[RMDB]
RNA sequence: GGGAACGACUCGAGUAGAGUCGAAAAGCCGGAUGUGGUCCGCCAGCCACUUACCUAGUCCCAGCUGGUGCAGUUCGGCGACCGCGCGUGGUGUCAGCCCGUCGCCGCAAGGCUUGUCGCGGGGGAAAGACACCACAAUUUUCGAAUUGUGGUGUCUAAAAGAAACAACAACAACAAC
Reactivity to DMS in 0.01 (KOAc 150mM, MgCl2 10mM, bicine 150mM(pH8.5), 24C), signal-to-noise 3, nucleotides 027 to 126: g020c090c050g020g010a080u000g000u000g030g010u010c130c040g000c040c030a060g000c020c070a080c050u000u020a090c080c060u010a110g000u000c010c020c030a160g020c040u010g000g020u000g000c080a150g000u000u000c030g000g010c030g000a050c040c020g010c090g010c070g010u010g000g000u010g010u000c070a190g010c020c010c100g020u020c080g000c010c020g020c150a060a080g010g000c030u000u010g010u010c100g010c030g010g000g000g000g010a110a150
Reactivity to 2A3 in 0.01 (KOAc 150mM, MgCl2 10mM, bicine 150mM(pH8.5), 24C), signal-to-noise 2, nucleotides 027 to 126: g050c030c050g010g020a130u180g050u080g300g030u100c070c050g000c030c000a000g020c010c000a070c000u040u130a100c000c050u090a050g090u070c020c010c000a000g000c040u030g070g000u050g050c040a060g020u050u050c000g000g020c020g020a020c010c010g080c010g000c000g060u130g000g050u060g070u080c010a020g040c040c000c000g040u070c010g010c010c010g030c000a060a050g030g000c000u040u090g110u070c040g000c000g000g010g000g000g020a130a130